[RMDB]
RNA sequence: GGGAACGACUCGAGUAGAGUCGAAAACGGCCAUAUUGACGAUAUCGGAAUCCUUCGCGCCGAUGGUCACGAUCUGCGCGGGCUUGUCGAGGCCGACGAGCAGCGGGCCGAUGAUGGUUGCCCCGCACGCUAGCCAGGGAUUCGUCCCUGGCUAGCGAAAAGAAACAACAACAACAAC
Reactivity to DMS in 0.01 (KOAc 150mM, MgCl2 10mM, bicine 150mM(pH8.5), 24C), signal-to-noise 1, nucleotides 027 to 126: c060g010g040c000c010a090u000a140u000u000g020a080c110g030a180u000a030u010c040g000g020a160a050u000c030c010u000u010c010g010c020g030c020c060g010a000u000g030g020u000c170a100c160g030a050u000c010u010g000c000g000c010g000g000g000c040u000u000g010u000c050g000a170g030g020c100c010g000a020c010g020a000g000c010a120g010c220g000g000g010c000c000g010a070u000g000a080u000g020g010u000u000g020c140c000c000c050g030c190a020
Reactivity to 2A3 in 0.01 (KOAc 150mM, MgCl2 10mM, bicine 150mM(pH8.5), 24C), signal-to-noise 1, nucleotides 027 to 126: c010g040g000c010c000a020u060a110u130u190g080a060c110g030a020u020a020u270c010g040g000a020a150u140c000c020u040u060c030g000c000g020c010c020g000a000u010g060g040u220c090a030c150g080a010u000c000u000g000c000g000c000g010g040g050c000u000u000g030u000c030g030a130g120g240c180c000g010a020c000g030a010g030c060a030g090c040g000g000g000c020c010g000a000u050g010a010u010g000g020u020u050g110c000c020c020c000g040c020a060
Description:
Source: RMDB library OK2TST, as collected in RNAgym. An RNA of 177 nucleotides, treated with DMS and 2A3 and read out base by base. DMS (dimethyl sulfate) methylates the pairing face of unpaired adenines and cytosines.